Background
This 177-nucleotide RNA was probed chemically with 2A3 and DMS.
RNA sequence: GGGAACGACUCGAGUAGAGUCGAAAAGGAUCCUUCCUAGUCAGGAAGGUAACUGGAUCAUAUCCAGUUACCUCUGACUAGGAUGGUUGUCAUUGUACACGAGGAUGGCAACGUGUAUAAAGGAUCGCUAGUACAGUGUAUUCGUACAUUGUACUAGAAAAGAAACAACAACAACAAC
Reactivity to 2A3 in 0.01 (KOAc 150mM, MgCl2 10mM, bicine 150mM(pH8.5), 24C), signal-to-noise 9, nucleotides 027 to 126: g020g000a000u000c000c000u010u020c000c000u000a000g000u000c000a000g020g170a190a020g000g000u000a000a000c000u000g000g010a010u050c060a090u120a070u160c000c000a000g000u000u000a000c000c000u000c000u000g000a000c000u000a000g000g000a000u010g010g000u000u000g000u000c010a010u010u060g120u140a050c130a030c140g120a060g150g020a030u030g040g000c010a020a010c020g060u110g020u030a130u020a040a070a010g000g000a000u000c000g000
Reactivity to DMS in 0.01 (KOAc 150mM, MgCl2 10mM, bicine 150mM(pH8.5), 24C), signal-to-noise 9, nucleotides 027 to 126: g000g000a010u000c000c000u000u000c000c000u000a000g000u000c000a010g010g010a170a040g010g010u000a000a000c000u000g000g000a020u000c180a080u010a300u000c000c000a000g000u000u000a000c000c000u000c000u000g000a010c000u000a000g000g010a010u000g010g010u000u000g000u000c020a040u000u000g010u000a060c050a090c190g000a100g010g000a070u000g010g000c040a040a040c000g010u000g010u000a070u010a040a050a020g010g010a010u000c000g000
2A3 adducts were read by reverse transcription with SuperScript II with manganese. Source: RMDB library OK2TRN, as collected in RNAgym.